Chemical mapping of a 177-nucleotide RNA with DMS and 2A3. Source: RMDB libraries RFM100 and RFMREP, as collected in RNAgym. DMS adducts were read by reverse transcription with MarathonRT.
[RMDB]
RNA sequence: GGGAACGACUCGAGUAGAGUCGAAAAGAAAGGGAAGCAGGUUAAUAUUCCUGUACAUAGUAAAUUUGCGGUGACGUUGAGGGCUAAUUUCUGACACUUCGAGAUAUGUUUUGUAGGAUUGUCGUCCAUGCCAUACAGUGUUCGCACUGUAUGGCAUAAAAGAAACAACAACAACAAC
Reactivity to DMS in 0.01 (KOAc 150mM, MgCl2 10mM, bicine 150mM(pH8.5), 24C), signal-to-noise 4, nucleotides 027 to 126: g010a040a090a060g010g020g000a100a110g000c010a020g020g000u000u010a070a080u020a180u030u030c010c010u000g010u010a080c100a100u020a060g030u010a050a090a110u010u000u020g020c050g000g000u000g000a110c090g020u020u010g000a040g030g000g000c030u000a060a080u000u000u000c020u010g000a100c060a050c070u010u030c050g000a090g010a090u030a080u030g000u000u000u010u010g020u010a110g000g010a040u020u010g010u010c060g000u000c020c060
Reactivity to 2A3 in 0.01 (KOAc 150mM, MgCl2 10mM, bicine 150mM(pH8.5), 24C), signal-to-noise 4, nucleotides 027 to 126: g030a030a030a020g060g000g000a070a000g030c010a000g030g000u060u090a150a020u070a100u190u140c000c000u000g010u010a040c000a040u200a010g160u170a040a080a130u120u080u040g050c060g000g020u060g010a050c030g010u010u030g040a040g020g020g000c000u030a040a100u000u060u050c060u060g020a010c020a010c060u050u110c020g070a060g040a070u100a060u160g120u030u080u080u090g030u010a030g030g060a070u020u050g060u060c040g000u000c020c020
For 2A3 the reverse transcriptase was SuperScript II with manganese.